An RNA of 177 nucleotides, treated with DMS and 2A3 and read out base by base. Values cover nucleotides 27 to 126. It was measured as part of the RMDB library OK2TRN. The RNA was probed in 150 mM KOAc, 10 mM MgCl2 and 150 mM bicine (pH 8.5) at 24 C.

RNA sequence: GGGAACGACUCGAGUAGAGUCGAAAAUCGGUGAUCCGUUUUACACGGUGAGCUGGGGGUGGCCGCAGAGACCAGCGAGAAGCGACUGUUUACUAAAAACACAGGUCCGUGCGAAGCCGUAAGGCGAGCCAUACCCUACGUUCGCGUAGGGUAUGGCAAAAGAAACAACAACAACAAC
Reactivity to DMS in 0.01 (KOAc 150mM, MgCl2 10mM, bicine 150mM(pH8.5), 24C), signal-to-noise 9, nucleotides 027 to 126: u000c040g020g010u010g010a180u000c010c010g010u000u010u010u000a130c190a040c020g000g010u000g000a300g010c020u000g010g010g000g000g040u000g000g010c060c030g010c060a070g000a100g010a060c020c030a100g020c040g000a110g010a140a130g010c060g000a100c110u000g010u000u000u010a140c200u030a060a070a040a060a060c080a040c090a090g010g010u000c040c050g010u000g000c050g010a100a160g010c020c010g010u010a080a090g010g010c040g010a120
Reactivity to 2A3 in 0.01 (KOAc 150mM, MgCl2 10mM, bicine 150mM(pH8.5), 24C), signal-to-noise 6, nucleotides 027 to 126: u080c010g000g020u050g020a030u010c000c010g000u020u020u080u130a110c110a010c010g000g000u020g010a020g000c020u020g010g000g010g000g020u050g040g010c040c010g000c030a010g050a010g020a130c010c020a010g020c020g020a080g030a140a020g030c040g060a050c060u030g040u050u030u040a130c110u140a100a120a060a070a010c060a010c010a030g040g020u000c040c010g060u040g040c020g050a090a020g010c000c000g020u050a060a030g030g020c030g010a010